[RMDB]
RNA sequence: GGGAACGACUCGAGUAGAGUCGAAAAGAAAGGCAGCCACUGCAGCCCACGAAGCCAUUCGAAGCAUGCUUUUGCAUGCCGCCCACGACUGAGGGCAGCUGCGGCACUGAGGGCAGCUGCCGAAAGAGAUAUCCAGCUGGUUCGCCAGCUGGAUAUCAAAAGAAACAACAACAACAAC
Reactivity to DMS in 0.01 (KOAc 150mM, MgCl2 10mM, bicine 150mM(pH8.5), 24C), signal-to-noise 2, nucleotides 027 to 126: g000a090a060a150g030g010c020a060g020c050c050a130c080u000g010c050a070g000c030c030c030a140c080g000a140a080g010c050c030a090u000u010c060g010a170a100g000c020a030u000g000c010u000u010u010u010g030c030a030u000g030c000c180g010c000c030c020a100c200g000a130c070u010g020a150g010g030g000c010a080g020c000u010g020c080g020g010c080a190c140u010g020a100g030g010g040c060a020g010c010u000g010c000c000g000a010a020a130g000a130
Reactivity to 2A3 in 0.01 (KOAc 150mM, MgCl2 10mM, bicine 150mM(pH8.5), 24C), signal-to-noise 2, nucleotides 027 to 126: g030a040a120a020g040g000c020a010g000c040c020a060c030u090g080c040a020g030c000c010c020a030c050g020a030a020g090c010c050a100u070u060c030g040a040a010g010c020a030u030g010c000u220u280u300u300g000c010a010u030g000c020c020g000c010c010c000a090c020g200a080c060u150g060a140g090g020g030c000a000g000c000u030g000c040g030g000c070a010c230u210g050a160g000g050g000c010a000g020c020u000g000c010c000g000a000a000a000g090a000